Background:
This 177-nucleotide RNA was probed chemically with DMS and 2A3. Values cover nucleotides 27 to 126. The reactions ran in a buffer of 150 mM KOAc, 10 mM MgCl2 and 150 mM bicine (pH 8.5), at 24 C.
RNA sequence: GGGAACGACUCGAGUAGAGUCGAAAAGAGGCGGGAAAGUUAAUCAAAAGUGCAACAAAACUUUCCCUAAAUCAAAUCUAUAUCGUUUUGUUGCACUUUUUUCUUCGAUUUAGAUUUGUAAAACCAACUUUAUGAAAGCAUUCGUGCUUUCAUAAAGAAAAGAAACAACAACAACAAC
Reactivity to DMS in 0.01 (KOAc 150mM, MgCl2 10mM, bicine 150mM(pH8.5), 24C), signal-to-noise 3, nucleotides 027 to 126: g000a120g010g030c210g010g000g000a060a050a060g000u010u010a100a110u030c150a070a050a060a020g010u000g010c000a010a010c000a030a020a020a030c010u010u000u000c020c010c010u010a030a030a100u010c050a020a030a060u000c010u000a030u010a040u000c010g010u000u000u000u000g010u010u000g000c010a010c000u000u010u000u010u000u000c070u000u000c060g010a030u000u000u000a020g010a040u000u000u010g030u000a120a050a090a140c140c120a040a150
Reactivity to 2A3 in 0.01 (KOAc 150mM, MgCl2 10mM, bicine 150mM(pH8.5), 24C), signal-to-noise 2, nucleotides 027 to 126: g040a010g050g030c100g010g020g030a000a070a000g050u100u180a090a090u140c080a090a100a090a060g020u010g030c000a010a000c000a010a080a000a020c000u030u020u000c000c000c000u020a000a010a020u100c010a010a000a010u030c020u020a030u000a020u170c020g000u020u020u020u070g000u010u000g000c000a010c010u080u050u030u020u020u000c050u050u110c010g020a020u000u060u050a020g010a030u000u020u070g020u060a070a060a030a040c050c010a010a080